RNA sequence: GGGAACGACUCGAGUAGAGUCGAAAAUCACCAAAAGGCAUCAUUGUCAAUUGCUUUAUGUCUUUCUUUCUUUGCCGCAUAUCAUAGCGCAUAUACAGAGAAAAUAGACAACGAAGUAGCAAGUGGAGACUACGAUACUGUUCGCAGUAUCGUAGUCAAAAGAAACAACAACAACAAC
Reactivity to 2A3 in 0.01 (KOAc 150mM, MgCl2 10mM, bicine 150mM(pH8.5), 24C), signal-to-noise 4, nucleotides 027 to 126: u050c030a110c010c020a000a000a050a110g040g020c020a030u060c040a080u230u110g040u050c030a090a200u090u090g010c000u020u060u060a050u060g010u000c000u010u060u030c030u020u040u010c010u030u050u050g050c110c030g000c080a040u080a050u260c050a070u170a240g000c010g000c060a020u080a020u050a140c030a000g040a010g010a020a010a010a020u030a020g020a010c000a040a050c120g050a040a020g010u070a030g040c060a100a050g070u040g080g070a100
Reactivity to DMS in 0.01 (KOAc 150mM, MgCl2 10mM, bicine 150mM(pH8.5), 24C), signal-to-noise 4, nucleotides 027 to 126: u010c060a180c020c010a080a070a110a090g000g020c040a050u000c170a070u000u020g030u000c050a140a100u000u000g010c010u000u000u010a050u010g000u000c000u000u000u000c130u000u000u000c010u000u000u000g020c120c060g020c020a070u020a110u020c190a070u000a110g010c070g020c200a040u010a100u000a210c050a050g000a030g020a020a020a030a040u010a010g010a040c010a020a090c190g000a030a030g030u010a050g010c110a040a060g020u010g020g000a300